Structure probing data (2A3 and DMS) for a 177-nucleotide construct. 2A3 adducts were read by reverse transcription with SuperScript II with manganese. It was measured as part of the RMDB library TTRDEL.

RNA sequence: GGGAACGACUCGAGUAGAGUCGAAAAGAUAUGGACGAUGGACAUGCCUGACAUUCGGAAACGAAUGCAAUGGGCAACAGCCCGCUCGUCCUAAGUCAAAACGCCGCUUACUUCGGUAAGCGGCGAACAUCGUUGAAAUGUUCGCAUUUCAACGAUGAAAAGAAACAACAACAACAAC
Reactivity to 2A3 in 0.01 (KOAc 150mM, MgCl2 10mM, bicine 150mM(pH8.5), 24C), signal-to-noise 3, nucleotides 027 to 126: g010a010u070a030u080g010g000a000c020g020a030u190g020g010a020c110a190u270g000c000c020u100g110a150c010a010u010u000c000g020g020a070a040a030c010g000a010a000u000g020c040a030a170u300g000g000g010c040a110a080c090a080g000c000c000c000g000c070u010c010g010u010c000c000u000a060a020g000u000c030a010a030a060a160c040g000c000c000g000c000u010u010a010c000u020u030c120g060g000u000a000a010g010c020g010g000c000g000a000a000
Reactivity to DMS in 0.01 (KOAc 150mM, MgCl2 10mM, bicine 150mM(pH8.5), 24C), signal-to-noise 3, nucleotides 027 to 126: g000a030u000a220u040g000g000a010c010g010a050u010g000g010a010c040a270u000g010c000c010u000g000a160c000a000u000u000c000g020g000a060a060a110c000g000a030a000u000g000c090a090a070u020g000g000g000c000a090a060c190a090g010c000c000c010g010c260u000c020g000u000c000c000u030a020a050g010u000c000a060a100a120a150c020g010c000c000g020c000u000u000a010c000u000u020c210g030g020u020a010a010g000c000g020g000c000g000a000a040